This 177-nucleotide RNA was probed chemically with DMS and 2A3. Source: RMDB library OK2TST, as collected in RNAgym. 2A3 is a SHAPE reagent: it acylates the 2'-hydroxyl of flexible nucleotides of all four kinds.

[RMDB]
RNA sequence: GGGAACGACUCGAGUAGAGUCGAAAACCUCCUCAAAAAACAUACACAGCGUGUCUUAUUUGAGUCAUGCGCAAAUCCUCUACUUGCGGGAGUGCAUAGAGAGGAUGCUGACGCAGAGGAGCUGUCACGCGUCUCAAGUAUUCGUACUUGAGACGCGAAAAGAAACAACAACAACAAC
Reactivity to DMS in 0.01 (KOAc 150mM, MgCl2 10mM, bicine 150mM(pH8.5), 24C), signal-to-noise 1, nucleotides 027 to 126: c030c000u000c020c060u020c020a010a030a060a140a050a020c100a060u000a100c190a090c100a030g010c020g030u000g000u000c060u000u010a080u000u000u010g010a030g000u000c040a030u030g080c010g000c080a070a090a050u010c000c000u000c000u000a110c000u000u000g010c000g000g000g000a170g010u000g010c000a020u000a150g000a020g000a010g000g010a010u000g000c080u000g020a020c020g030c000a000g000a040g010g050a100g010c100u000g020u000c250a090
Reactivity to 2A3 in 0.01 (KOAc 150mM, MgCl2 10mM, bicine 150mM(pH8.5), 24C), signal-to-noise 2, nucleotides 027 to 126: c010c000u040c020c020u030c010a070a110a000a030a020a020c050a030u150a050c040a010c000a040g030c020g000u080g030u040c020u100u210a300u080u110u100g020a020g050u040c020a020u150g030c030g000c020a080a150a010u050c010c000u010c000u080a300c000u130u000g040c040g030g220g280a150g090u300g000c000a030u180a040g010a000g000a000g000g000a000u010g000c030u030g000a080c000g000c020a030g050a070g080g030a040g000c000u070g030u130c050a000
In probing experiments dimethyl sulfate is read out at A N1 and C N3, which are open when not base-paired. For DMS the reverse transcriptase was MarathonRT.